[RMDB]
RNA sequence: GGGAACGACUCGAGUAGAGUCGAAAAUGAACCUUCGGGUUCAGACAUCCUAAGUCUGAAACGAAUGAGCCUUGUCAGAACCCAUUCGGAAACGAAUGUGCGUUCUUGGAUUUAGGCUCACUAUUUCAGAUAUGGAAAUGCAUCACUUCGGUGAUGCGGACAGACCUCAGUUCGCUGAGGUCUGUCCAAAAGAAACAACAACAACAAC
Reactivity to 2A3 in 0.01 (KOAc 150mM, MgCl2 10mM, bicine 150mM(pH8.5), 24C), signal-to-noise 1, nucleotides 027 to 156: u020g000a010a000c000c000u030u030c300g110g010g000u000u000c000a000g020a000c060a140u030c000c000u010a100a060g000u000c000u000g040a020a040a010c100g030a240a300u000g000a000g000c000c000u000u000g010u000c000a000g000a000a000c020c000c000a000u000u000c030g040g060a090a080a130c000g010a000a000u040g100u150g170c120g020u000u000c000u030u050g010g010a030u000u300u210a000g000g010c000u000c000a000c000u000a000u030u000u000c010a000g020a000u030a050u170g030g070a090a160a130u230g000c000a010u000c000a010c010u020u080c240g050g010u010g010a000u000g030c010